[RMDB]
RNA sequence: GGGAACGACUCGAGUAGAGUCGAAAAGGGAUGUGGUCGGCCUCCGGUGAGACAAAGGUGUAGCCGUGCGCGAACACCAGCGAUUCCUGAUUCCAGUGCGCCGGAAAGCGCAGGACGAAGGGCGCGCGGAUGUUACGUACUUCGGUACGUAACAUCCAAAAGAAACAACAACAACAAC
Reactivity to 2A3 in 0.01 (KOAc 150mM, MgCl2 10mM, bicine 150mM(pH8.5), 24C), signal-to-noise 3, nucleotides 027 to 126: g030g020g010a080u120g040u070g110g010u040c020g040g020c020c000u030c000c030g030g030u060g020a100g020a040c060a020a140a040g090g000u060g020u030a020g020c040c000g080u110g020c120g010c010g010a080a000c010a010c020c020a010g030c000g050a060u140u090c000c000u040g030a070u080u000c030c000a020g130u020g050c000g000c000c020g100g090a070a070a000g010c030g000c030a020g010g030a010c040g020a040a020g020g010g000c020g000c000g000c020
Reactivity to DMS in 0.01 (KOAc 150mM, MgCl2 10mM, bicine 150mM(pH8.5), 24C), signal-to-noise 5, nucleotides 027 to 126: g010g000g020a060u010g020u000g010g020u000c060g020g000c030c020u000c040c050g010g000u000g010a130g000a090c110a050a150a130g010g010u000g010u000a230g010c020c050g030u010g010c140g020c030g000a080a060c050a050c010c050a140g000c080g000a080u000u010c010c000u000g000a270u000u000c010c000a130g010u010g010c010g010c010c010g020g020a040a120a120g000c010g000c010a060g000g000a090c070g000a170a090g020g000g000c040g010c020g020c110